[RMDB]
RNA sequence: GGGAACGACUCGAGUAGAGUCGAAAAGAUUGCUAUGUUGCCCGGCAGAGGCUUUGUAUCUGGGCACUAGUCUCAACAGAUGACGACACUUCUGUUCAAUCUCAUAUCCUAUCCAUACUGGAUGUAACGCACGCUAGUUGUUCGCAACUAGCGUGCGAAAAGAAACAACAACAACAAC
Reactivity to 2A3 in 0.01 (KOAc 150mM, MgCl2 10mM, bicine 150mM(pH8.5), 24C), signal-to-noise 2, nucleotides 027 to 126: g020a020u000u010g000c010u020a050u260g030u050u110g010c030c000c000g000g000c060a060g050a030g210g060c120u210u200u160g050u050a200u010c040u060g000g000g000c000a010c000u000a000g010u000c070u020c170a000a010c000a000g000a020u020g060a100c130g050a000c090a030c130u000u000c000u000g000u020u030c030a000a000u000c010u000c060a030u020a010u180c010c000u020a010u000c000c010a030u050a300c080u140g000g010a020u020g110u160a100a000